[RMDB]
RNA sequence: GGGAACGACUCGAGUAGAGUCGAAAAGAUAUGGAUGGAGCAGAAGACGCAUCGGAAACGAUGCGAGAACUUCUGAACUACUCCAAGUCCUAAGUCAAACGACCGCCACGUUCGCGUGGCGGUCGAAGCUAAGAUCAUCGUUCGCGAUGAUCUUAGCAAAAGAAACAACAACAACAAC
Reactivity to DMS in 0.01 (KOAc 150mM, MgCl2 10mM, bicine 150mM(pH8.5), 24C), signal-to-noise 1, nucleotides 027 to 126: g000a120u000a170u000g010g010a070u010g030g000a060g000c030a010g010a050a000g050a160c000g000c000a000u000c000g000g020a130a080a210c020g020a010u000g000c000g000a010g000a080a140c010u000u000c000u000g000a000a050c010u000a200c090u000c000c000a020a180g020u000c000c000u010a100a160g020u010c090a100a170a100c030g000a010c000c000g010c000c000a020c000g020u000u020c290g020c030g050u010g000g010c000g030g010u000c000g020a000a030